[RMDB]
RNA sequence: GGGAACGACUCGAGUAGAGUCGAAAAGCUGAGGCGCGGAGCCUGCCGCAACUCGACGCUAUAGCCGGUCCAUGCGCUGAUUUCCUGUGCGACACGAAUGCGGAUGGCGUCGGUGGAGACGAUGAAACAUCCGACGACCGUUCGCGGUCGUCGGAUGAAAAGAAACAACAACAACAAC
Reactivity to DMS in 0.01 (KOAc 150mM, MgCl2 10mM, bicine 150mM(pH8.5), 24C), signal-to-noise 1, nucleotides 027 to 126: g000c050u010g030a120g000g000c120g030c130g010g040a180g030c080c070u000g060c060c030g000c020a070a110c050u020c000g000a070c030g020c030u000a080u000a200g010c040c090g030g020u010c010c030a080u000g010c020g030c040u000g000a130u000u000u030c100c010u010g000u010g010c090g010a140c070a090c110g000a050a060u030g030c030g010g000a000u000g010g000c070g000u000c000g000g000u000g000g000a180g010a100c090g000a120u010g000a070a110a210
An RNA of 177 nucleotides, treated with DMS and read out base by base. Conditions: 150 mM KOAc, 10 mM MgCl2 and 150 mM bicine (pH 8.5), 24 C. Source: RMDB library OK2TST, as collected in RNAgym.